[RMDB]
This 177-nucleotide RNA was probed chemically with 2A3 and DMS.
The data come from the RNA Mapping Database (RMDB), library OK2TST.
For 2A3 the reverse transcriptase was SuperScript II with manganese.
The RNA was probed in 150 mM KOAc, 10 mM MgCl2 and 150 mM bicine (pH 8.5) at 24 C.

RNA sequence: GGGAACGACUCGAGUAGAGUCGAAAAGUCUGGGUACUGGCGCGAAUGUCUUCCUGGCUUCUGCGGAACUGGCGGCUGUUGCGGCGCUGAUUGGCAAACUGCCGACGCCGGAAGAGUACCAGACCUAUAAUUGGCAUUAAUUCGUUAAUGCCAAUUAAAAAGAAACAACAACAACAAC
Reactivity to 2A3 in 0.01 (KOAc 150mM, MgCl2 10mM, bicine 150mM(pH8.5), 24C), signal-to-noise 6, nucleotides 027 to 126: g020u010c020u050g080g040g050u070a180c020u060g100g000c060g000c040g140a140a080u200g030u030c020u060u060c030c040u040g020g000c020u030u000c020u080g000c020g030g030a080a050c020u040g070g010c010g060g000c050u100g110u280u130g090c110g070g010c030g000c050u070g080a300u080u130g040g000c050a070a120a140c050u030g000c010c010g010a010c020g000c000c000g000g010a030a020g030a010g030u000a020c010c000a000g010a010c000c000u070a080
Reactivity to DMS in 0.01 (KOAc 150mM, MgCl2 10mM, bicine 150mM(pH8.5), 24C), signal-to-noise 8, nucleotides 027 to 126: g010u000c030u000g010g010g010u000a040c030u000g010g010c050g020c040g010a070a080u010g010u000c020u000u000c060c050u010g040g000c030u000u000c020u000g030c030g010g010a100a100c060u010g000g020c020g010g000c030u010g020u000u000g020c070g010g020c080g010c050u000g010a130u000u000g010g010c060a080a100a140c080u000g000c010c040g000a040c060g010c010c000g010g000a050a050g010a070g010u000a060c010c000a020g000a060c010c060u000a100